[RMDB]
RNA sequence: GGGAACGACUCGAGUAGAGUCGAAAAAGGUGAGCUUAGAAGCAGCUACCCUCUAAGAAAAGCGUAACAGCUUACCGGCCGAGGUUUGAGGCGCCCAAAAUGAUCGGGACUCAAAUCCACCACCGAGACCUGUCCGUACCACUCAUACUGGUAAUCGCCUUACUCUUACGUUCGCGUAAGAGUAAGGAAAAGAAACAACAACAACAAC
Reactivity to 2A3 in 0.01 (KOAc 150mM, MgCl2 10mM, bicine 150mM(pH8.5), 24C), signal-to-noise 5, nucleotides 027 to 156: a000g050g020u050g030a030g010c010u060u120a060g050a160a030g060c060a000g040c020u090a100c010c020c000u020c050u100a100a140g040a060a110a010a010g000c020g030u070a090a040c010a040g020c000u020u040a040c000c030g000g020c060c080g050a140g020g000u000u000u040g030a020g020g080c090g260c040c000c080a030a090a000a050u260g040a090u130c060g000g000g010a010c000u000c000a010a010a030u030c010c010a020c030c000a020c000c040g030a030g040a100c010c050u060g060u020c040c020g030u030a030c000c010a040c020u080c030a070u100a150c050u060g040g000u040a030a080u070c050g040
Reactivity to DMS in 0.01 (KOAc 150mM, MgCl2 10mM, bicine 150mM(pH8.5), 24C), signal-to-noise 1, nucleotides 027 to 156: a050g000g000u000g000a060g010c030u000u000a180g020a070a100g010c130a100g010c030u000a080c040c030c040u000c050u020a120a090g000a140a070a060a110g000c040g070u000a080a120c100a070g020c010u000u000a070c030c030g000g000c010c220g000a300g000g000u020u000u010g010a120g000g040c060g000c010c000c050a030a040a070a150u000g000a070u000c060g010g040g000a130c000u000c030a020a060a040u000c010c020a070c060c060a050c010c010g030a190g010a060c070c010u010g000u020c010c010g000u030a070c020c000a050c010u020c090a110u000a100c050u000g010g000u000a060a040u010c030g020